[RMDB]
RNA sequence: GGGAACGACUCGAGUAGAGUCGAAAAACCUGCACCGAGGCUUGUCGUUCGACCGAAUCGAAGAGGUAGCCGCCGACGAAGCCGAGGCCGGCUACGGCGAAGGUGAUGCACCAGAGGUCAAAGGUCUUCAUGUCUUCCUUUCGAGUGGGUGUCAAGCACUCACAAGGAAUUUCGAUUCCUUGUGAGUAAAAGAAACAACAACAACAAC
Reactivity to DMS in 0.01 (KOAc 150mM, MgCl2 10mM, bicine 150mM(pH8.5), 24C), signal-to-noise 1, nucleotides 027 to 156: a110c030c020u000g020c010a090c070c030g040a210g050g010c030u000u000g030u000c020g020u000u000c010g010a050c000c000g040a110a220u020c050g030a070a040g010a180g000g000u000a150g010c000c000g030c100c000g040a130c050g000a100a150g020c010c020g010a200g000g020c000c020g070g000c000u000a060c060g020g020c050g000a030a110g020g020u000g010a130u010g000c020a030c040c000a110g020a160g010g000u010c070a070a100a140g000g020u040c010u000u010c050a040u000g040u000c000u010u000c000c000u000u000u000c010g020a110g010u000g000g000g020u000g000u010c040a050a100g040c160
Reactivity to 2A3 in 0.01 (KOAc 150mM, MgCl2 10mM, bicine 150mM(pH8.5), 24C), signal-to-noise 1, nucleotides 027 to 156: a000c030c010u060g020c070a100c030c020g080a020g080g000c010u000u020g020u050c030g040u030u090c040g060a040c000c010g030a030a050u050c010g000a050a010g040a050g060g060u010a010g000c010c020g010c020c010g080a200c070g100a120a030g030c060c030g000a060g060g000c020c060g000g000c020u030a020c040g050g000c080g040a030a010g050g010u010g030a040u030g020c030a000c010c010a020g040a060g170g100u110c050a100a030a050g000g020u020c000u020u010c020a020u090g060u050c000u010u010c000c000u040u040u020c080g000a070g020u050g000g010g020u030g010u010c010a000a010g000c000